RNA sequence: GGGAACGACUCGAGUAGAGUCGAAAACGUCCUAGUUUCGACUAGGACGAAAUAAAAUCAGCGGUAAAUAAUCGAGCCGUAUUACCGCUGAACGCCUCGAUAAAAUGCGAUGAUUCGUCAUCGCAAAUGUAUAGUAGUGCUUCGGCACUACUAUACAAAAAGAAACAACAACAACAAC
Reactivity to DMS in 0.01 (KOAc 150mM, MgCl2 10mM, bicine 150mM(pH8.5), 24C), signal-to-noise 3, nucleotides 027 to 126: c010g000u000c000c000u010a000g000u000u010u000c150g030a030c000u000a000g010g000a010c000g000a000a090a070u000a050a090a110a070u000c010a000g000c020g010g000u000a010a020a080u010a070a130u010c070g010a050g010c070c070g020u000a050u000u000a000c010c000g000c000u000g000a010a070c140g020c030c010u000c170g030a080u020a040a060a100a090u000g000c000g010a010u000g000a030u000u010c180g020u000c000a010u000c000g030c000a000a020a020
Reactivity to 2A3 in 0.01 (KOAc 150mM, MgCl2 10mM, bicine 150mM(pH8.5), 24C), signal-to-noise 4, nucleotides 027 to 126: c000g000u000c000c000u010a020g000u030u060u050c220g080a010c000u000a000g000g010a000c000g000a000a010a000u060a000a070a010a060u030c000a000g000c000g010g000u020a040a100a100u140a100a140u200c140g030a040g140c050c030g040u010a010u000u020a000c000c010g000c000u000g000a000a010c030g050c000c000u090c050g020a020u130a280a170a040a030u070g000c010g000a000u000g000a010u020u050c210g040u010c070a010u000c000g000c000a010a010a000